[RMDB]
RNA sequence: GGGAACGACUCGAGUAGAGUCGAAAACGGACGACGAUGACUUCUUCCUGCAGUCUGGCGCCUCAGAGCCUGACAGCGACAGCGACGGAAGCAGUCAGCAGGGCGCUAAUGUGGCACCAGGCGCGCCCGGUGGUACAUCGUUCGCGAUGUACCACCGAAAAGAAACAACAACAACAAC
Reactivity to DMS in 0.01 (KOAc 150mM, MgCl2 10mM, bicine 150mM(pH8.5), 24C), signal-to-noise 3, nucleotides 027 to 126: c080g000g010a090c080g010a060c090g020a150u000g010a040c030u000u000c040u000u000c000c020u010g030c100a270g000u010c000u000g000g010c000g010c020c120u020c070a050g010a150g000c140c040u000g000a040c300a120g020c000g000a050c030a030g020c040g000a140c180g000g010a030a070g010c060a020g010u000c010a060g000c080a160g020g000g010c030g010c030u000a120a070u000g010u000g010g010c070a070c090c020a070g010g040c080g000c070g000c000c020
Reactivity to 2A3 in 0.01 (KOAc 150mM, MgCl2 10mM, bicine 150mM(pH8.5), 24C), signal-to-noise 3, nucleotides 027 to 126: c020g020g070a020c050g020a000c060g100a140u070g020a040c010u030u000c010u020u030c050c020u050g000c050a030g020u040c000u000g000g010c010g030c010c010u070c060a100g000a070g210c010c040u050g040a050c050a030g020c010g020a010c030a020g000c030g060a050c100g070g000a030a020g000c010a010g000u020c000a000g010c020a030g000g010g000c000g000c040u080a100a060u080g020u060g100g030c040a040c080c010a020g030g010c010g010c010g010c020c010

This 177-nucleotide RNA was probed chemically with DMS and 2A3. The reactions ran in a buffer of 150 mM KOAc, 10 mM MgCl2 and 150 mM bicine (pH 8.5), at 24 C. It was measured as part of the RMDB library OK2TST. 2A3 adducts were read by reverse transcription with SuperScript II with manganese. The 2A3 profile rests on 5,788 reads. As a SHAPE reagent, 2A3 marks flexible, mostly unpaired nucleotides at the ribose 2'-OH. The DMS profile rests on 2,755 reads. Reactivities are rounded to 0.1 and cut off at 0 and 3. DMS (dimethyl sulfate) methylates the pairing face of unpaired adenines and cytosines. Values cover nucleotides 27 to 126.